RNA sequence: GGGAACGACUCGAGUAGAGUCGAAAAUCAGAGCCACUCAAGCCUCAGUCUCCAGAUUCAUCUCAAACCUCCCGUUAAUGAUUUAUGGGAGGUUUUCAUCUCCACAUGGACUGCGGAGACCUACUGUCCCUGUUUCUUGAGUGGAAACAGAAGGUCAAUUAGUAAUUACGUUCGCGUAAUUACUAAUAAAAGAAACAACAACAACAAC
Reactivity to DMS in 0.01 (KOAc 150mM, MgCl2 10mM, bicine 150mM(pH8.5), 24C), signal-to-noise 2, nucleotides 027 to 156: u010c060a090g000a170g010c040c020a080c050u010c060a060a090g000c070c010u000c020a050g010u000c000u000c040c060a170g010a130u000u020c040a060u000c040u010c050a040a030a040c000c020u000c010c000c000g040u000u000a050a160u010g030a270u000u010u000a080u020g000g010g010a080g030g000u010u000u010u000c020a080u010c020u010c020c010a060c060a040u000g020g010a150c060u020g000c050g010g010a050g020a000c030c030u000a090c070u010g010u010c010c060c020u010g020u000u000u000c000u010u010g000a080g040u000g020g010a000a030a090c000a070g020a100a100g000g010u010c050a170
Reactivity to 2A3 in 0.01 (KOAc 150mM, MgCl2 10mM, bicine 150mM(pH8.5), 24C), signal-to-noise 3, nucleotides 027 to 156: u210c050a030g050a040g120c000c000a000c000u010c000a020a000g000c000c000u030c020a020g020u060c030u040c110c020a030g010a070u140u120c050a090u090c170u070c120a000a030a000c000c000u000c010c000c000g010u050u070a100a060u270g130a130u150u140u170a040u060g000g000g000a000g000g000u000u000u000u000c000a010u000c010u060c060c060a070c030a180u160g040g030a010c000u020g000c020g030g010a080g000a050c000c000u080a080c020u040g000u040c020c000c010u010g050u020u060u010c010u000u020g030a030g010u030g030g000a030a030a020c030a010g090a070a000g020g000u010c000a000
Conditions: 150 mM KOAc, 10 mM MgCl2 and 150 mM bicine (pH 8.5), 24 C. An RNA of 207 nucleotides, treated with DMS and 2A3 and read out base by base. For DMS, 4,555 sequencing reads were counted. It was measured as part of the RMDB library OK3TST. Values cover nucleotides 27 to 156.